[RMDB]
RNA sequence: GGGAACGACUCGAGUAGAGUCGAAAACAUGGCGCUGUGCCGGUACCCAUCCCGCCGCGGGAGGCACUGAAGACCACCGAGCGUUUCAUGACUCGGCUCGGCCCACUGCUGCGCCAUCACCGCGUGCAAUCAUUCGGUGAUUCGUCACCGAAUGAUUAAAAGAAACAACAACAACAAC
Reactivity to 2A3 in 0.01 (KOAc 150mM, MgCl2 10mM, bicine 150mM(pH8.5), 24C), signal-to-noise 9, nucleotides 027 to 126: c040a060u090g030g000c040g040c130u130g080u140g080c000c000g010g000u090a100c000c000c000a050u080c010c010c020g020c030c010g000c010g020g000g010a040g020g000c010a000c040u050g080a120a030g050a130c010c000a010c010c000g000a000g020c020g030u080u160u200c150a170u210g160a290c020u010c040g040g000c050u070c060g030g000c000c030c010a090c040u090g010c030u040g000c010g000c020c000a030u020c030a020c000c010g020c050g020u190g040c000
Reactivity to DMS in 0.01 (KOAc 150mM, MgCl2 10mM, bicine 150mM(pH8.5), 24C), signal-to-noise 4, nucleotides 027 to 126: c130a080u010g000g020c010g000c170u010g000u010g020c000c030g000g010u010a070c010c020c030a210u010c040c010c000g020c010c010g010c010g000g010g010a110g000g020c030a030c010u030g020a060a060g000a150c100c080a240c010c020g000a030g000c030g000u020u060u030c220a120u040g000a130c040u000c020g000g000c080u010c130g000g000c110c060c150a160c070u020g010c060u000g010c040g000c010c000a070u000c040a180c010c000g000c010g000u030g040c030